This 207-nucleotide RNA was probed chemically with DMS.
The RNA was probed in 150 mM KOAc, 10 mM MgCl2 and 150 mM bicine (pH 8.5) at 24 C.
For DMS the reverse transcriptase was MarathonRT.
[RMDB]
RNA sequence: GGGAACGACUCGAGUAGAGUCGAAAACGUGGCCAUGCAGAUUUCCAAGGGCAGGCAGUUGUUUUUUGUUCCCGUACAACUGUCCAAAUCCCCUGAGUUUUUCAAGCUAAGGUUACUCUAUUUUUGCCCCCUCUGGACUGAGAUGGAAGAUCUGUUAAAAAUGAUUUAGGUUCGCCUAAAUCAUUUUAAAAGAAACAACAACAACAAC
Reactivity to DMS in 0.01 (KOAc 150mM, MgCl2 10mM, bicine 150mM(pH8.5), 24C), signal-to-noise 1, nucleotides 027 to 156: c070g010u010g010g000c010c050a110u020g050c010a140g010a070u010u000u010c020c030a060a070g000g030g110c260a060g000g020c010a050g020u000u000g010u000u000u050u020u000u020g000u000u010c000c010c020g000u000a070c010a010a020c000u010g000u000c000c000a060a120a180u000c060c030c040c030u000g000a090g020u000u000u000u000u000c070a090a180g010c040u010a060a060g040g010u000u000a050c040u000c040u000a050u000u000u000u000u000g000c000c000c000c040c050u000c110u000g000g020a150c050u010g020a100g000a160u000g010g000a080a140g000a110u000c020u000g020u020u000a070